An RNA of 177 nucleotides, treated with DMS and read out base by base. DMS adducts were read by reverse transcription with MarathonRT. Conditions: 150 mM KOAc, 10 mM MgCl2 and 150 mM bicine (pH 8.5), 24 C. For DMS, 1,000 sequencing reads were counted. Values cover nucleotides 27 to 126. Source: RMDB library TTRDEL, as collected in RNAgym.
[RMDB]
RNA sequence: GGGAACGACUCGAGUAGAGUCGAAAAGAUAUGGAAGAAGGCCGAUAAGGAGGCUGUCGGAAACGACAGCUCCUUUUGACGGCUGGUUCCUAAGUCAAAGCACUAAAGGGUUCGCCCUUUAGUGCAACCUGUCGCUAGAGUUCGCUCUAGCGACAGGAAAAGAAACAACAACAACAAC
Reactivity to DMS in 0.01 (KOAc 150mM, MgCl2 10mM, bicine 150mM(pH8.5), 24C), signal-to-noise 2, nucleotides 027 to 126: g010a050u000a300u010g000g020a020a010g000a300a240g000g000c000c010g050a220u000a000a050g000g000a010g020g020c000u000g000u000c000g020g010a020a020a150c000g010a020c010a000g010c000u000c040c000u010u000u000u000g000a220c060g010g010c000u010g000g010u000u000c000c000u010a120a200g000u000c000a050a100a230g000c000a010c020u000a000a010a010g030g010g020u010u030c230g010c000c000c000u000u000u010a000g040u000g000c010a030a010